[RMDB]
RNA sequence: GGGAACGACUCGAGUAGAGUCGAAAAUGAUGGUAGUCAAUUCGACAGUUCUUUGUCACCAUACCUCAUCAAUGCCGUUUUGCAAAUUCGGUUGCAUUUCAUGGAGGAUUUUGACAUUGGUGAGAAGCUACGUCCCCUGAUUCGUCAGGGGACGUAGAAAAGAAACAACAACAACAAC
Reactivity to 2A3 in 0.01 (KOAc 150mM, MgCl2 10mM, bicine 150mM(pH8.5), 24C), signal-to-noise 4, nucleotides 027 to 126: u180g020a010u040g070g070u040a100g030u050c070a080a140u180u050c060g000a060c080a100g080u090u020c000u060u030u020g100u050c030a040c060c020a030u070a160c010c000u000c000a030u000c000a030a020u040g060c030c000g020u030u020u000u000g070c050a050a080a090u130u090c070g180g040u030u050g000c010a020u020u040u140c070a100u130g120g000a040g130g080a130u090u100u040u230g050a090c000a030u000u000g000g030u010g000a020g010a020a000g020
Reactivity to DMS in 0.01 (KOAc 150mM, MgCl2 10mM, bicine 150mM(pH8.5), 24C), signal-to-noise 2, nucleotides 027 to 126: u030g040a010u000g040g030u000a090g000u030c050a080a180u010u030c120g000a060c080a100g000u050u000c020u000u000u000g010u000c020a020c000c040a030u020a080c110c000u000c000a010u010c000a010a020u020g000c010c020g000u000u010u040u000g020c080a050a010a130u010u040c120g030g020u000u000g010c010a040u000u010u010c140a150u000g000g030a150g000g010a070u010u070u000u000g000a110c030a000u000u000g000g010u000g000a010g010a090a090g010